An RNA of 177 nucleotides, treated with 2A3 and read out base by base.
2A3 adducts were read by reverse transcription with SuperScript II with manganese.
It was measured as part of the RMDB library OK1LIB.
The RNA was probed in 150 mM KOAc, 10 mM MgCl2 and 150 mM bicine (pH 8.5) at 24 C.
For 2A3, 673 sequencing reads were counted.
High 2A3 reactivity points to a flexible backbone, as in loops and unpaired stretches.
RNA sequence: GGGAACGACUCGAGUAGAGUCGAAAAAUUAUUGGUUUUAUUACUUUACUUUUUAACCUAAUUUUCUUGGUUCGUAUUGUAAUUUCGAACUUUAGUAAAUUAUAAUAUGCUCUUAAGAUUAUGUAUAGCCCAGUAUAUAGUUCGCUAUAUACUGGGCAAAAGAAACAACAACAACAAC
Reactivity to 2A3 in 0.01 (KOAc 150mM, MgCl2 10mM, bicine 150mM(pH8.5), 24C), signal-to-noise 2, nucleotides 027 to 126: a000u080u110a030u050u010g120g110u040u050u140u260a190u270u080a080c000u120u050u100a210c040u240u120u070u130u110a070a070c000c000u010a080a200u150u000u000u000c000u050u020g030g000u010u000c000g010u010a010u000u000g010u000a000a010u020u020u040c070g030a250a170c190u100u170u080a060g010u120a000a000a000u020u000a000u000a010a030u000a020u020g000c000u000c000u050u140a010a010g000a010u000u050a000u270g050u000a160u000a120